[RMDB]
RNA sequence: GGGAACGACUCGAGUAGAGUCGAAAAGCGUUUUUAAUGACGACGCGACCUUCGCUUGUCAUCACUGUCCCAUUGCGACCAAUGCGCGUCGGUAGUACGCAGUCAAACAUAUCGAUACCGCGAAUCGGUUCUGUGACAAUUUCGAUUGUCACAGAACAAAAGAAACAACAACAACAAC
Reactivity to DMS in 0.01 (KOAc 150mM, MgCl2 10mM, bicine 150mM(pH8.5), 24C), signal-to-noise 4, nucleotides 027 to 126: g010c030g000u000u000u010u010u010a120a090u000g010a070c110g010a030c130g030c010g020a120c170c110u000u050c050g020c020u000u000g010u000c020a070u000c080a040c090u000g000u000c030c010c030a130u010u000g010c070g000a050c090c060a100a100u020g010c060g030c080g000u010c030g010g000u000a030g010u000a080c090g020c080a070g000u010c120a040a090a060c100a120u010a040u010c030g000a040u000a070c180c030g000c080g000a070a050u000c110g020
Reactivity to 2A3 in 0.01 (KOAc 150mM, MgCl2 10mM, bicine 150mM(pH8.5), 24C), signal-to-noise 4, nucleotides 027 to 126: g030c020g010u010u030u020u120u240a160a110u120g040a000c030g010a020c050g020c010g050a090c000c000u130u100c040g000c020u050u090g020u050c010a030u050c020a060c080u100g050u050c020c020c010a040u050u190g020c030g040a040c030c040a090a110u180g000c020g000c010g020u020c010g000g020u010a020g050u010a030c080g020c080a010g060u110c060a100a060a060c070a100u060a010u020c010g020a020u010a060c000c070g010c000g050a040a060u080c040g060